Structure probing data (DMS and 2A3) for a 177-nucleotide construct. For DMS the reverse transcriptase was MarathonRT. In probing experiments dimethyl sulfate is read out at A N1 and C N3, which are open when not base-paired. The DMS profile rests on 1,514 reads.

RNA sequence: GGGAACGACUCGAGUAGAGUCGAAAACAUCUCAUCGCCGCUGAUAUUCGCCACCUGCGGAUCAUCCAUGGCGAAACCGAAAUGAUCCUGAAAGGCCUGGCGCACGGCAUUUUGCGCGGUGCUGCCAGGGGAGCGUAGGAUUCGUCCUACGCUCCCCAAAAGAAACAACAACAACAAC
Reactivity to DMS in 0.01 (KOAc 150mM, MgCl2 10mM, bicine 150mM(pH8.5), 24C), signal-to-noise 2, nucleotides 027 to 126: c070a030u000c020u000c010a160u000c030g030c020c040g030c170u010g010a090u000a110u010u010c020g030c020c240a170c300c080u000g020c050g030g000a020u010c070a000u010c030c200a100u010g010g020c000g000a020a050a120c140c140g020a050a070a030u000g000a080u000c010c010u010g000a070a150a130g030g000c110c040u000g020g050c000g010c030a020c000g000g020c020a130u000u000u000u000g020c160g000c000g010g010u000g000c040u000g020c010c000a020
Reactivity to 2A3 in 0.01 (KOAc 150mM, MgCl2 10mM, bicine 150mM(pH8.5), 24C), signal-to-noise 3, nucleotides 027 to 126: c000a040u040c010u020c020a030u030c010g010c000c000g000c060u060g020a020u020a030u090u040c020g000c020c040a230c050c100u170g000c000g020g000a010u010c040a020u000c020c000a040u070g000g000c010g050a150a050a010c070c040g020a030a040a020u020g010a020u020c020c020u080g060a160a060a040g120g020c020c040u020g010g000c000g020c020a000c000g070g050c000a020u110u170u090u140g090c300g010c090g110g020u020g020c060u140g010c000c000a000